[RMDB]
RNA sequence: GGGAACGACUCGAGUAGAGUCGAAAAAACGGGAGUCGUGCCGCCUGCAUGGAAGACUGGUGUUAUCAUCCCCAUCCUGAAGGCCGGAAAAAAGGCGGAGGACCUCGAUUCUUACAGGCCUGUGACGGAUACGGUUGACUUUCGAGUCAACCGUAUCAAAAGAAACAACAACAACAAC
Reactivity to DMS in 0.01 (KOAc 150mM, MgCl2 10mM, bicine 150mM(pH8.5), 24C), signal-to-noise 2, nucleotides 027 to 126: a070a060c080g000g000g000a080g010u000c010g040u030g010c010c020g000c020c010u010g000c060a130u030g020g010a060a070g020a110c070u010g000g010u000g020u050u020a090u020c100a140u000c000c020c000c030a100u010c040c000u040g000a110a040g010g020c000c020g010g000a000a050a010a040a090a020g000g000c000g000g000a080g000g000a080c030c000u000c000g020a140u010u000c020u000u030a100c110a130g000g000c000c000u000g030u000g000a200c160g000
Reactivity to 2A3 in 0.01 (KOAc 150mM, MgCl2 10mM, bicine 150mM(pH8.5), 24C), signal-to-noise 4, nucleotides 027 to 126: a000a010c090g000g000g010a170g010u040c020g060u170g030c000c000g000c000c000u040g010c030a110u100g060g060a050a040g040a060c040u030g000g040u050g030u140u080a100u120c060a080u070c020c000c000c000a030u070c020c010u060g060a100a040g080g000c010c020g030g000a030a030a000a000a000a010g010g000c020g010g070a120g050g060a060c000c000u000c010g010a020u000u000c000u020u090a070c040a060g020g020c000c020u090g030u060g060a050c110g040